This 177-nucleotide RNA was probed chemically with 2A3 and DMS.
The RNA was probed in 150 mM KOAc, 10 mM MgCl2 and 150 mM bicine (pH 8.5) at 24 C.
DMS adducts were read by reverse transcription with MarathonRT.
Source: RMDB library OK2TST, as collected in RNAgym.
Values are in units of 0.01, from 0 to 300, in steps of 10.
RNA sequence: GGGAACGACUCGAGUAGAGUCGAAAACUGUUCUUCAUUACCAGGGAAUGUGAGUCAUUCCCAGAUUUGUGUGAUUGGGAUUCCAAAGCAUUGCUGUAUCCGAUGAUCUUAUUAAAUCCAAGUGUCACCGCUAUUAGAGAUUCGUCUCUAAUAGCGGAAAAGAAACAACAACAACAAC
Reactivity to 2A3 in 0.01 (KOAc 150mM, MgCl2 10mM, bicine 150mM(pH8.5), 24C), signal-to-noise 2, nucleotides 027 to 126: c020u040g050u040u020c020u120u070c030a090u030u150a040c010c060a040g030g000g000a030a020u000g080u130g130a160g140u110c000a010u010u000c000c000c000a000g000a000u010u100u080g100u000g000u000g060a060u030u090g050g050g010a050u100u030c080c000a140a090a030g040c070a120u000u270g030c020u030g020u080a020u070c030c030g080a070u070g000a020u000c000u090u120a130u050u210a160a090a030u000c040c020a080a100g080u010g080u140c050a060
Reactivity to DMS in 0.01 (KOAc 150mM, MgCl2 10mM, bicine 150mM(pH8.5), 24C), signal-to-noise 3, nucleotides 027 to 126: c130u000g000u000u000c020u000u000c080a040u000u020a090c110c090a170g010g000g020a050a010u000g010u000g010a160g030u010c010a020u000u000c010c000c020a120g010a080u010u000u000g020u000g010u010g020a080u000u000g010g000g000a070u000u000c080c120a060a080a080g020c040a080u000u010g010c050u000g010u000a050u000c070c040g000a060u000g000a050u000c050u000u000a070u010u000a070a060a060u010c050c090a090a080g000u010g010u010c120a150